RNA sequence: GGGAACGACUCGAGUAGAGUCGAAAACCCGUCGUGUUCGCACGACGGGAACUACCGAGAAUGGAGCUCGGUAUAAAACUCCAACCCUUGGAAACAACGGAACAAUCGCCACUUUCGAGUGGCGAAAUCAAAGAGUGGGUUUCGACCCACUCUUUGAAAAAGAAACAACAACAACAAC
Reactivity to DMS in 0.01 (KOAc 150mM, MgCl2 10mM, bicine 150mM(pH8.5), 24C), signal-to-noise 1, nucleotides 027 to 126: c020c000c000g010u020c000g050u000g020u000u040c180g050c010a010c020g000a000c000g020g000g000a000a020c080u000a300c010c010g010a010g000a140a080u020g000g000a010g080c010u000c000g030g010u020a100u000a050a020a020a080c050u020c000c000a030a300c050c000c050u000u000g020g000a130a150a080c040a020a000c180g000g000a050a040c190a060a100u000c000g010c000c000a000c020u000u020u010c170g000a000g010u010g000g000c000g000a000a020a070